[RMDB]
RNA sequence: GGGAACGACUCGAGUAGAGUCGAAAAGAUAUGGACUGUGGACAUGCUACAGCAAUCGGAAACGAUUGAUGUAGCAACAGCCACAGGUCCUAAGUCAAACCAAACUAUUCUUCGGAAUAGUUUGGAAUCUUCUCAUUUAGUUCGCUAAAUGAGAAGAAAAAGAAACAACAACAACAAC
Reactivity to 2A3 in 0.01 (KOAc 150mM, MgCl2 10mM, bicine 150mM(pH8.5), 24C), signal-to-noise 4, nucleotides 027 to 126: g010a020u070a050u120g000g000a000c010u000g000u020g000g010a040c040a150u080g000c000u000a000c000a000g020c000a010a010u000c000g030g000a100a060a060c010g000a010u010u010g020a010u010g000u000a000g000c000a000a000c020a010g040c000c000a010c000a010g060g090u070c010c000u010a090a030g060u020c050a040a060a160c000c000a010a000a000c010u000a010u010u000c000u040u080c300g070g000a000a000u000a000g000u010u000u010g000g000a010a030
Reactivity to DMS in 0.01 (KOAc 150mM, MgCl2 10mM, bicine 150mM(pH8.5), 24C), signal-to-noise 7, nucleotides 027 to 126: g000a030u000a300u000g000g010a180c000u000g010u000g000g000a040c080a200u000g010c000u010a010c010a020g000c000a010a000u000c000g000g000a140a080a190c000g020a010u000u000g000a030u000g000u000a000g010c000a010a020c250a160g000c010c000a000c000a000g010g010u000c000c000u000a030a130g010u000c030a110a150a240c010c000a010a000a010c000u000a010u000u000c000u000u010c210g020g000a020a000u000a000g000u000u000u000g000g010a050a040

Source information
This 177-nucleotide RNA was probed chemically with 2A3 and DMS. For 2A3, 15,874 sequencing reads were counted. The DMS profile rests on 9,812 reads.